Background
This 177-nucleotide RNA was probed chemically with DMS and 2A3. DMS adducts were read by reverse transcription with MarathonRT. Source: RMDB library TTRDES, as collected in RNAgym. As a SHAPE reagent, 2A3 marks flexible, mostly unpaired nucleotides at the ribose 2'-OH. The DMS profile rests on 3,074 reads. Conditions: 150 mM KOAc, 10 mM MgCl2 and 150 mM bicine (pH 8.5), 24 C.

RNA sequence: GGGAACGACUCGAGUAGAGUCGAAAAGAUAUGGAACCCAGUGGAGCUGGUAUCGGAAACGAUACGCAGCGUUGAAACUGAGGUUCCUAAGUCAAAACGGAGUAACUUCUUCGGAAGUUACUCCGAACUAUGCAAAUUUCUUCGGAAAUUUGCAUAGAAAAGAAACAACAACAACAAC
Reactivity to DMS in 0.01 (KOAc 150mM, MgCl2 10mM, bicine 150mM(pH8.5), 24C), signal-to-noise 2, nucleotides 027 to 126: g020a010u010a020u010g010g010a020a020c000c000c000a010g010u000g020g000a020g040c000u000g000g000u020a000u010c010g020g000a010a000a030c010g000a020u000a000c020g020c010a000g010c000g030u000u010g000a090a230a020c010u000g000a150g010g010u000u000c000c000u000a000a080g010u000c010a060a060a140a300c010g000g000a010g000u000a020a010c010u000u000c010u000u030c200g030g000a000a000g010u000u000a000c000u000c000c010g010a010a060
Reactivity to 2A3 in 0.01 (KOAc 150mM, MgCl2 10mM, bicine 150mM(pH8.5), 24C), signal-to-noise 2, nucleotides 027 to 126: g000a000u000a000u040g010g000a000a020c000c000c010a000g030u000g010g080a020g000c010u010g000g020u000a000u000c020g000g000a020a010a010c020g000a010u040a030c190g110c300a000g010c010g010u180u050g000a000a000a000c000u000g000a300g070g000u000u000c000c000u000a010a010g010u000c000a000a000a080a080c020g000g000a010g000u000a000a010c010u000u020c000u100u130c300g040g010a000a000g000u000u000a000c000u010c000c000g000a010a010